An RNA of 207 nucleotides, treated with DMS and 2A3 and read out base by base. The RNA was probed in 150 mM KOAc, 10 mM MgCl2 and 150 mM bicine (pH 8.5) at 24 C. It was measured as part of the RMDB library M2RFPK.

[RMDB]
RNA sequence: GGGAACGACUCGAGUAGAGUCGAAAAUCCGACUCUCAUAGGCUCUCCAACCCAACUCCUACUCAAUACGUUCUCGUCGUACAGAACGGUAACAUGUUUUCCGAACAUCCGCGCUUGGGUAUACGAGAAAGGCGUAGAUUAUUCGUAAUCUACGCAAACUUUCCCUUAACUUCGGUUAAGGGAAAGUAAAAGAAACAACAACAACAAC
Reactivity to DMS in 0.01 (KOAc 150mM, MgCl2 10mM, bicine 150mM(pH8.5), 24C), signal-to-noise 1, nucleotides 027 to 156: u010c060c000g040a020c020u000c030u000c030a220u000a120g010g000c000u010c040u000c020c050a090a160c070c000c030a080a140c000u000c030c040u030a060c010u000c050a080a110u000a070c030g030u000u000c000u010c010g010u000c160g020u000a100c080a070g010a050a120c020g000g010u000a070a150c080a100u000g060u000u000u000u000c130c050g020a080a040c020a100u000c010c030g000c070g000c070u000u000g010g000g000u010a050u000a030c040g010a140g020a060a090a130g010g000c000g000u000a000g000a050u000u000a040u000u000c300g010u000a000a010u000c000u000a000c000g000c000a000a020
Reactivity to 2A3 in 0.01 (KOAc 150mM, MgCl2 10mM, bicine 150mM(pH8.5), 24C), signal-to-noise 3, nucleotides 027 to 156: u070c050c010g030a050c040u010c000u030c030a100u070a110g070g000c010u020c020u000c050c040a090a090c030c000c010a020a040c020u070c020c020u080a090c000u010c060a040a080u100a130c040g020u040u000c000u010c010g080u010c040g000u020a030c030a060g070a150a040c010g000g010u040a040a000c010a070u050g050u040u050u040u030c060c030g060a050a030c030a050u030c000c010g050c030g000c120u050u070g070g000g010u110a040u060a110c050g020a030g010a100a050a030g200g000c000g000u000a000g000a000u010u010a010u050u050c120g030u040a000a000u000c000u010a000c000g000c000a010a000
Overview: For 2A3, 1,901 sequencing reads were counted. For DMS, 2,643 sequencing reads were counted.